[RMDB]
RNA sequence: GGGAACGACUCGAGUAGAGUCGAAAAACAACACGCUUCGGCGUGUUGUCGACGGAGGAAGCUGAGGACGCGCUUCUGCCGCAGCAGGGAAGCGCAGCGUAAAUCAGAGGUGAUUCGUCACCUCUAAAUUACGAUGACGAUUCGUCGUCAUCGUAAUAAAAGAAACAACAACAACAAC
Reactivity to DMS in 0.01 (KOAc 150mM, MgCl2 10mM, bicine 150mM(pH8.5), 24C), signal-to-noise 5, nucleotides 027 to 126: a020c000a010a010c000a000c000g010c010u000u020c190g030g010c010g020u000g010u000u010g000u000c030g000a070c080g020g010a070g020g000a090a060g010c050u000g000a100g000g000a130c120g010c030g010c020u000u000c020u000g010c030c110g000c100a100g000c040a110g000g000g010a040a010g010c030g030c030a100g010c110g000u010a040a080a090u010c130a030g010a010g000g010u000g000a030u000u020c170g010u000c000a030c000c010u000c000u000a000a040
Reactivity to 2A3 in 0.01 (KOAc 150mM, MgCl2 10mM, bicine 150mM(pH8.5), 24C), signal-to-noise 3, nucleotides 027 to 126: a000c010a000a000c010a000c010g000c010u020u070c190g130g000c000g000u010g000u010u000g000u020c020g010a040c050g040g060a050g030g020a120a010g010c040u050g040a030g060g030a030c030g010c000g010c020u020u000c010u060g040c020c030g070c040a050g030c030a030g020g020g050a000a020g010c020g000c040a020g010c030g060u110a040a040a110u160c060a010g000a010g030g000u030g000a020u000u080c130g050u020c090a000c000c000u000c000u000a010a020
Structure probing data (DMS and 2A3) for a 177-nucleotide construct. For 2A3 the reverse transcriptase was SuperScript II with manganese. The RNA was probed in 150 mM KOAc, 10 mM MgCl2 and 150 mM bicine (pH 8.5) at 24 C. It was measured as part of the RMDB library M2PK50.